[RMDB]
This 207-nucleotide RNA was probed chemically with 2A3.
Source: RMDB library OK3TST, as collected in RNAgym.
The RNA was probed in 150 mM KOAc, 10 mM MgCl2 and 150 mM bicine (pH 8.5) at 24 C.

RNA sequence: GGGAACGACUCGAGUAGAGUCGAAAAUGUGGAUUCCGUGGCUAGUACCUGCGGAGUAGAUCUGUUAGAGGACGACGACGACGACGUCGCCGCCGAGUAAGAGAGACUUGUCUAUCAUCUGUCCGUUUGUCCUCACAGCUCAAUUAGCAUCAUCAUGUCUCUAGCGAGUGUUCGCACUCGCUAGAGAAAAAGAAACAACAACAACAAC
Reactivity to 2A3 in 0.01 (KOAc 150mM, MgCl2 10mM, bicine 150mM(pH8.5), 24C), signal-to-noise 2, nucleotides 027 to 156: u090g020u050g070g070a120u060u000c020c000g000u030g020g000c030u050a020g020u070a060c010c040u000g000c000g010g000a000g020u060a040g000a060u010c010u020g040u130u120a030g000a020g000g000a000c000g000a000c010g010a000c070g000a000c030g050a030c030g030u020c030g000c070c020g050c030c030g070a070g020u050a090a030g040a030g000a010g020a120c010u120u110g060u050c060u090a100u130c010a020u050c060u150g020u040c020c010g020u000u030u290g010u020c000c000u000c000a020c000a000g000c000u010c050a060a260u130u140a090g050c010a010u080c000a040u130c030a040u270g080